[RMDB]
RNA sequence: GGGAACGACUCGAGUAGAGUCGAAAAUCUGCUACUUCAUAAGAACCUGGGGUAAGUUCUAAUUCUGCAGCUCUAUAAACAAUCGUUUGCUGGGUAUUACCAUCUCUAUUAAUGUCAAUAGAGUAAGAGUUAUUGAGUUAUUCGUAACUCAAUAACUAAAAGAAACAACAACAACAAC
Reactivity to 2A3 in 0.01 (KOAc 150mM, MgCl2 10mM, bicine 150mM(pH8.5), 24C), signal-to-noise 4, nucleotides 027 to 126: u000c010u010g020c020u040a050c020u070u090c030a080u070a170a050g040a100a050c010c020u050g000g000g000g060u040a040a050g010u050u020c030u070a070a070u090u050c020u080g050c010a010g000c020u010c020u070a100u110a080a130a010c040a030a130u100c050g040u030u080u070g060c040u030g040g040g000u060a090u060u080a050c020c010a090u050c000u000c000u020a020u060u040a130a080u150g100u220c030a000a010u010a020g000a010g030u020a080a010g030
Reactivity to DMS in 0.01 (KOAc 150mM, MgCl2 10mM, bicine 150mM(pH8.5), 24C), signal-to-noise 6, nucleotides 027 to 126: u010c060u000g010c050u000a050c040u010u010c060a070u010a140a120g010a100a100c070c050u010g010g010g010g020u000a040a110g000u000u000c040u010a080a110u000u010c030u000g020c060a090g020c040u000c060u000a070u010a070a080a100c140a070a060u000c090g010u000u010u000g000c030u000g010g010g010u000a060u000u010a100c050c050a100u000c010u000c010u000a010u010u000a080a090u010g010u000c110a020a010u000a000g000a020g010u010a070a110g000
This 177-nucleotide RNA was probed chemically with 2A3 and DMS. The 2A3 profile rests on 6,268 reads. DMS adducts were read by reverse transcription with MarathonRT.